[RMDB]
The data come from the RNA Mapping Database (RMDB), library M2RFPK.
An RNA of 207 nucleotides, treated with 2A3 and DMS and read out base by base.
The RNA was probed in 150 mM KOAc, 10 mM MgCl2 and 150 mM bicine (pH 8.5) at 24 C.
RNA sequence: GGGAACGACUCGAGUAGAGUCGAAAAGGGUUUUGCGAUCUUUAAGCAGAUGGCAGGUUCACCCCGUACGGUGCGGAAGUUCGCGCUUCCGUGAUACGCGAAAAUCGGACGGUGGCUGCAAGUCGCAUUGAAGGGAUCGCCUUCGGGCGAUCCCUAAAGUGAUUAUCAUAUUCGUAUGAUAAUCACUAAAAGAAACAACAACAACAAC
Reactivity to 2A3 in 0.01 (KOAc 150mM, MgCl2 10mM, bicine 150mM(pH8.5), 24C), signal-to-noise 3, nucleotides 027 to 156: g060g010g010u030u040u060u090g020c040g020a070u070c070u090u190u140a110a060g030c030a040g040a130u120g090g000c010a000g000g030u120u140c020a030c000c010c000c000g000u020a010c030g010g010u050g010c010g000g010a000a010g010u080u240c110g030c020g000c140u000u010c010c000g010u010g040a110u110a120c070g020c020g150a040a020a000a110u050c000g020g000a030c060g010g040u050g020g000c010u010g010c040a030a010g060u040c040g000c040a040u020u080g060a050a030g000g000g050a010u000c020g010c000c010u020u060c100g040g000g000c020g000a000u000c020c000c000u010a010a010
Reactivity to DMS in 0.01 (KOAc 150mM, MgCl2 10mM, bicine 150mM(pH8.5), 24C), signal-to-noise 2, nucleotides 027 to 156: g020g010g020u000u010u000u010g000c000g030a000u000c050u000u010u010a090a220g010c080a060g010a090u000g010g000c030a020g010g000u000u000c060a110c020c020c020c020g030u000a040c030g030g000u000g010c020g020g010a020a050g010u000u000c300g030c300g020c010u010u010c010c020g010u000g020a110u000a040c040g000c090g010a070a040a090a080u010c070g020g010a050c070g010g000u000g000g020c040u000g010c040a060a130g040u000c020g020c000a130u000u000g010a130a050g020g020g000a040u000c000g000c000c000u010u000c260g090g000g070c000g000a000u000c020c000c010u000a000a010